Chemical mapping of a 177-nucleotide RNA with DMS and 2A3. Conditions: 150 mM KOAc, 10 mM MgCl2 and 150 mM bicine (pH 8.5), 24 C. 2A3 adducts were read by reverse transcription with SuperScript II with manganese. The 2A3 profile rests on 1,425 reads.
RNA sequence: GGGAACGACUCGAGUAGAGUCGAAAAUUAUAAGGCUGUUGUGAACAGUCCCGACUUGACUUUCGGGAGUUUGAAAGGAGUUAAACUCAUUAAUAAUUCUACUGCUGUUCCCUCUAAGCCGAAGUCCGCUAGGAGGGUGAUUCGUCACCCUCCUAGCAAAAGAAACAACAACAACAAC
Reactivity to DMS in 0.01 (KOAc 150mM, MgCl2 10mM, bicine 150mM(pH8.5), 24C), signal-to-noise 2, nucleotides 027 to 126: u040u060a070u060a150a210g020g130c000u010g030u010u000g000u000g000a050a050c010a060g000u020c020c000c030g000a010c210u000u040g050a190c290u000u000u000c030g000g030g080a110g010u000u000u000g000a130a200a060g000g010a000g000u000u000a070a020a300c130u010c080a090u010u000a090a140u010a030a010u000u000c060u010a050c140u000g000c030u000g010u010u000c000c000c000u020c070u030a100a050g010c000c000g000a110a100g010u000c170c110
Reactivity to 2A3 in 0.01 (KOAc 150mM, MgCl2 10mM, bicine 150mM(pH8.5), 24C), signal-to-noise 3, nucleotides 027 to 126: u120u080a100u040a160a030g000g000c030u010g030u070u030g130u090g090a000a000c010a000g050u050c000c000c000g000a030c000u250u250g050a070c030u050u100u090c010g020g010g050a090g030u120u030u150g200a100a060a030g030g020a010g000u110u110a110a210a120c030u020c030a040u040u110a070a140u060a080a080u050u000c020u070a050c020u030g060c000u000g000u000u010c000c060c030u000c040u020a100a020g000c020c000g000a060a000g020u000c020c010